RNA sequence: GGGAACGACUCGAGUAGAGUCGAAAAUGGCAAUUUGACGGCCUAAACUUUUAGUCAGAUACGUUGUUGUGGAGGCUUGACGCAGCAAAAGAGAUUUAAAGCCCCGCAAAAUGUCGCUGUUUGAGACUGGCUUUGGCAUUUUGUUAAAUUUGAGAAACUUAAACAUCUAGUUCGCUAGAUGUUUAAGAAAAGAAACAACAACAACAAC
Reactivity to 2A3 in 0.01 (KOAc 150mM, MgCl2 10mM, bicine 150mM(pH8.5), 24C), signal-to-noise 2, nucleotides 027 to 156: u090g000g010c000a070a070u050u050u110g000a010c000g000g010c000c000u050a050a080a130c050u130u090u110u200a030g010u030c020a010g010a120u060a110c090g020u000u000g020u020u010g040u030g020g030a080g020g010c000u010u030g010a020c050g000c030a040g000c000a050a100a030a000g070a000g000a000u050u140u080a040a020a020g000c000c000c020c030g000c010a030a000a010a050u010g010u020c020g000c030u040g080u070u140u100g100a090g000a050c100u080g030g060c000u090u120u040g000g000c010a000u030u010u010u010g000u000u070a070a210a280u060u090u090g090a110g030a000a040a000
Reactivity to DMS in 0.01 (KOAc 150mM, MgCl2 10mM, bicine 150mM(pH8.5), 24C), signal-to-noise 2, nucleotides 027 to 156: u000g000g060c020a020a080u000u010u000g010a060c010g000g000c040c010u020a070a040a110c120u000u010u020u020a040g050u000c020a000g000a100u000a170c080g000u000u010g010u000u030g070u000g000g010a120g010g030c020u000u010g020a130c120g040c050a130g040c040a040a050a090a120g020a190g020a230u000u010u000a050a030a090g010c000c000c030c140g000c040a010a020a020a050u000g020u000c020g000c010u000g010u000u000u000g010a130g000a100c100u000g010g030c010u000u000u000g040g020c000a050u010u000u000u000g000u000u000a020a030a140u000u000u020g000a140g010a120a110a170